Source: RMDB libraries RFM100 and RFMREP, as collected in RNAgym. This 177-nucleotide RNA was probed chemically with 2A3 and DMS. The reactions ran in a buffer of 150 mM KOAc, 10 mM MgCl2 and 150 mM bicine (pH 8.5), at 24 C. Values cover nucleotides 27 to 126. For DMS the reverse transcriptase was MarathonRT. Values are in units of 0.01, from 0 to 300, in steps of 10.
RNA sequence: GGGAACGACUCGAGUAGAGUCGAAAAUAUCUGUAGUAAUUCUAGAGUCAAUACAUGCUAAAAAGCCACUAGUAAUAGUGGUUGCAUUUAUGACUUUGUAAUCCAAUUCAUUGGUGAUACUACAUAACGCAGAAGUAAAGUUCGCUUUACUUCUGCGAAAAGAAACAACAACAACAAC
Reactivity to 2A3 in 0.01 (KOAc 150mM, MgCl2 10mM, bicine 150mM(pH8.5), 24C), signal-to-noise 6, nucleotides 027 to 126: u190a030u020c070u040g010u000a000g000u000a010a180u170u040c060u090a040g000a000g020u000c010a050a050u010a030c040a010u010g010c020u170a290a080a070a050a020g020c000c010a000c000u010a000g060u150a100a200u010a060g000u000g010g000u010u030g000c000a000u000u000u020a020u010g000a000c000u010u020u040g050u040a040a040u000c000c020a020a030u190u130c060a130u090u130g010g000u020g020a020u010a040c000u010a000c000a020u070a050a020
Reactivity to DMS in 0.01 (KOAc 150mM, MgCl2 10mM, bicine 150mM(pH8.5), 24C), signal-to-noise 4, nucleotides 027 to 126: u050a110u030c160u010g000u000a010g010u000a040a190u020u000c060u030a030g000a000g000u000c010a030a070u000a050c100a010u000g000c020u010a030a120a140a090a130g000c010c000a010c000u000a030g010u050a110a130u000a010g000u000g000g000u000u000g000c000a000u000u000u000a030u010g000a020c000u010u010u000g010u020a080a120u020c010c000a020a040u010u020c260a070u000u000g000g000u000g010a130u000a000c000u000a010c010a030u030a070a180